Source information
This 207-nucleotide RNA was probed chemically with 2A3.
RNA sequence: GGGAACGACUCGAGUAGAGUCGAAAACAACAGUAGUUCGCUACUGUUGACUCCUCCUAAGUCGAGCGCGAAACUACUACAUCGAUCGUAUCGGAAACGAUACGGGAGUGAGUAGGAGCUCGAUAUGGACAGCUCUCAAAUGCUUCGGCAUUUGAAACCGUCAGAUCCUAUUCGUAGGAUCUGACGGAAAAGAAACAACAACAACAAC
Reactivity to 2A3 in 0.01 (KOAc 150mM, MgCl2 10mM, bicine 150mM(pH8.5), 24C), signal-to-noise 2, nucleotides 027 to 156: c000a010a010c000a010g020u000a010g020u050u050c200g020c130u000a000c000u000g000u000u000g000a020c010u000c000c000u010c000c000u070a160a000g030u010c000g000a010g000c050g050c100g190a140a160a100c030u010a010c000u150a190c010a140u290c060g050a060u040c000g000u000a000u000c000g060g000a080a080a050c020g010a000u000a010c000g000g000g000a050g010u040g010a000g000u000a000g020g010a010g000c000u000c000g000a010u010a030u030g020g010a010c080a070g030c030u030c000u010c110a010a030a000u000g010c010u040u060c300g120g000c000a000u090u090u010g050a150a030a010

Source information:
2A3 adducts were read by reverse transcription with SuperScript II with manganese. Conditions: 150 mM KOAc, 10 mM MgCl2 and 150 mM bicine (pH 8.5), 24 C.